[RMDB]
RNA sequence: GGGAACGACUCGAGUAGAGUCGAAAAGAGCUUCGUUACUGGUCUGGUGGGGUGUCGUUUGAUGAUGUGCCAAAUACAGCAGUGAACGAAAUGGAAACAGUAGCGUUGCGCAUGGCUAUUCGCAAUGGUUUUAAGUUCUUGCCAUCCAGCUAACUAGGGAAUAGGUACUAUUCGUAGUACCUAUUCCAAAAGAAACAACAACAACAAC
Reactivity to 2A3 in 0.01 (KOAc 150mM, MgCl2 10mM, bicine 150mM(pH8.5), 24C), signal-to-noise 7, nucleotides 027 to 156: g060a010g010c030u030u020c010g030u020u020a020c020u040g050g080u070c030u030g020g020u050g000g040g000g030u050g010u030c030g020u060u130u170g150a150u060g000a010u020g030u060g190c010c020a030a060a030u120a080c020a010g020c020a020g020u050g110a020a000c020g010a020a030a050u140g030g050a080a040a030c030a060g050u070a000g030c020g020u030u010g020c020g000c040a070u040g120g000c040u170a090u100u070c020g010c050a020a050u060g070g050u030u040u060u090a040a020g000u050u020c020u050u060g020c000c000a020u020c010c020a020g030c050u060a050a100c020u030a070g050
Reactivity to DMS in 0.01 (KOAc 150mM, MgCl2 10mM, bicine 150mM(pH8.5), 24C), signal-to-noise 3, nucleotides 027 to 156: g010a110g010c030u010u000c030g020u000u000a060c030u000g010g010u010c040u000g020g050u010g070g020g040g020u000g010u000c020g010u010u000u000g020a110u010g010a070u000g020u010g020c060c190a060a090a170u000a110c030a050g030c020a040g020u010g000a030a060c010g010a020a080a140u010g010g000a130a070a100c050a080g020u000a090g010c050g020u000u000g010c000g000c050a100u000g010g010c020u000a140u000u000c060g020c070a100a080u000g000g010u010u010u000u000a040a140g000u000u000c040u000u000g000c020c010a070u000c030c030a140g010c060u010a060a110c060u000a190g020
Conditions: 150 mM KOAc, 10 mM MgCl2 and 150 mM bicine (pH 8.5), 24 C.
The record gives the reactivity of an RNA of 207 nucleotides to 2A3 and DMS.
For 2A3 the reverse transcriptase was SuperScript II with manganese.
DMS (dimethyl sulfate) methylates the pairing face of unpaired adenines and cytosines.
The data come from the RNA Mapping Database (RMDB), library OK3TST.
For DMS the reverse transcriptase was MarathonRT.
The 2A3 profile rests on 6,027 reads.